[RMDB]
RNA sequence: GGGAACGACUCGAGUAGAGUCGAAAAUUGACACACAAGCUAGAGUUAUCUGAAAGGAAGGAACCUCAAUUGAGAAAGUGAUAACAUAAGAUCUAGCUGUAGGACACCUUCCUGGUUAGUGAUUGAACUACGGAGUGGCUUUCGAGCCACUCCGUAGAAAAGAAACAACAACAACAAC
Reactivity to DMS in 0.01 (KOAc 150mM, MgCl2 10mM, bicine 150mM(pH8.5), 24C), signal-to-noise 1, nucleotides 027 to 126: u000u000g020a090c120a130c090a070c090a080a050g000c010u000a020g000a160g010u000u000a020u030c000u000g030a120a150a040g000g000a020a100g000g020a300a090c050c000u000c040a090a110u010u030g000a060g020a070a180a020g000u010g000a140u010a010a020c080a160u000a040a090g000a220u000c000u000a020g030c000u000g000u000a030g010g010a110c200a070c020c000u000u010c000c000u000g060g030u000u000a010g000u000g010a090u000u010g010a080a080

An RNA of 177 nucleotides, treated with DMS and read out base by base. The RNA was probed in 150 mM KOAc, 10 mM MgCl2 and 150 mM bicine (pH 8.5) at 24 C. Reactivities are given for positions 27 through 126. It was measured as part of the RMDB library OK2TST. For DMS, 611 sequencing reads were counted.